[RMDB]
RNA sequence: GGGAACGACUCGAGUAGAGUCGAAAAAGGCUAUUUGUUCUGGAGAUAUUUCAGCCUGGAAAUGAGUGUAUGGGGUGGUGGGGUCAGAACAUAUGAUUAUGUUACGUAUCAUUACAUAUUGUGUGCCGAUUUUAGCGGCUUUCGAGCCGCUAAAAUCAAAAGAAACAACAACAACAAC
Reactivity to 2A3 in 0.01 (KOAc 150mM, MgCl2 10mM, bicine 150mM(pH8.5), 24C), signal-to-noise 1, nucleotides 027 to 126: a010g030g030c030u070a080u010u100u000g090u050u070c050u000g220g060a070g000a020u090a120u030u000u000c040a030g050c000c000u080g000g000a010a010a010u070g000a090g030u070g150u160a170u090g030g060g000g090u070g000g020u050g060g030g000g000u010c000a010g000a000a050c010a000u020a010u090g110a050u000u040a020u100g030u040u030a040c090g090u070a150u300c000a000u000u030a000c000a010u090a060u030u020g090u000g000u040g040c000c000
Reactivity to DMS in 0.01 (KOAc 150mM, MgCl2 10mM, bicine 150mM(pH8.5), 24C), signal-to-noise 1, nucleotides 027 to 126: a050g000g020c000u000a080u020u070u000g050u010u000c000u010g000g000a110g000a100u110a080u030u000u000c030a030g020c000c020u030g000g010a070a050a050u020g000a290g000u000g020u030a240u020g000g000g000g040u050g000g030u100g000g000g020g030u050c040a090g010a040a040c000a000u000a020u050g000a070u050u000a050u000g000u000u000a080c300g080u040a000u000c140a020u000u000a000c050a050u020a030u040u000g020u030g000u000g000c300c030